[RMDB]
RNA sequence: GGGAACGACUCGAGUAGAGUCGAAAAGAGCUUCAAGUUCGCUUGAAGCUCAAAAAAACCUUUGUGCAACGAAGCUAUGAAGCACACAUGCCCAUUGGGCAUGGUGUGGAGCUUCUUGCACUCUGGUAAAAAACUCCGCAUGUUCGCAUGCGGAGAACCAUUGGUUAUCCUUCGGGAUAACCAAUGGAAAAGAAACAACAACAACAAC
Reactivity to 2A3 in 0.01 (KOAc 150mM, MgCl2 10mM, bicine 150mM(pH8.5), 24C), signal-to-noise 2, nucleotides 027 to 156: g010a000g000c000u010u000c000a010a000g030u050u100c200g060c230u000u000g010a000a000g000c010u020c010a000a000a010a010a000a000a010c000c010u000u000u010g000u000g000c010a010a010c140g020a010a020g000c010u030a050u300g010a010a000g030c020a000c050a040c000a000u010g030c000c000c060a290u160u300g000g000g010c010a010u000g000g000u000g000u030g000g000a000g010c000u000u020c000u000u000g000c000a000c000u000c000u030g000g010u060a110a090a030a000a030a030c000u000c010c010g000c000a000u000g010u050u100c300g020c140a000u000g000c000g010g000a000g000a000a020